[RMDB]
RNA sequence: GGGAACGACUCGAGUAGAGUCGAAAAAUAAACUCACCAGCAACAUGAUGGCCACUUUUGGCCAUAACUUUGAAGUCUGGAGCCACCGUAGCCUCUGAUACACUGUCUCCGUGAGUUAGCAAGACAGCUCAUCCAGUCACUUCGGUGACUGGAUGAGAAAAGAAACAACAACAACAAC
Reactivity to DMS in 0.01 (KOAc 150mM, MgCl2 10mM, bicine 150mM(pH8.5), 24C), signal-to-noise 1, nucleotides 027 to 126: a120u020a030a000a080c100u000c000a300c000c070a000g030c020a070a260c050a000u000g000a000u040g000g050c000c000a070c300u030u000u030u000g000g000c000c000a000u000a010a010c120u050u050u000g050a000a230g010u000c030u000g000g010a000g000c080c000a050c040c030g000u010a000g070c020c030u000c140u040g000a120u000a050c130a010c020u000g000u000c000u000c030c020g000u000g090a080g010u000u000a030g080c170a080a110g010a020c250a040g030
Reactivity to 2A3 in 0.01 (KOAc 150mM, MgCl2 10mM, bicine 150mM(pH8.5), 24C), signal-to-noise 2, nucleotides 027 to 126: a000u220a010a060a020c000u000c040a030c020c000a000g000c030a030a140c030a090u090g060a010u020g110g050c040c030a140c140u110u270u190u300g000g010c000c010a010u000a000a000c040u060u100u190g090a050a050g050u040c040u030g000g040a060g030c010c010a040c000c030g080u100a020g030c010c030u030c030u060g000a060u000a170c070a000c040u060g000u050c000u000c050c050g010u000g000a060g000u100u000a030g050c080a040a000g000a060c010a030g030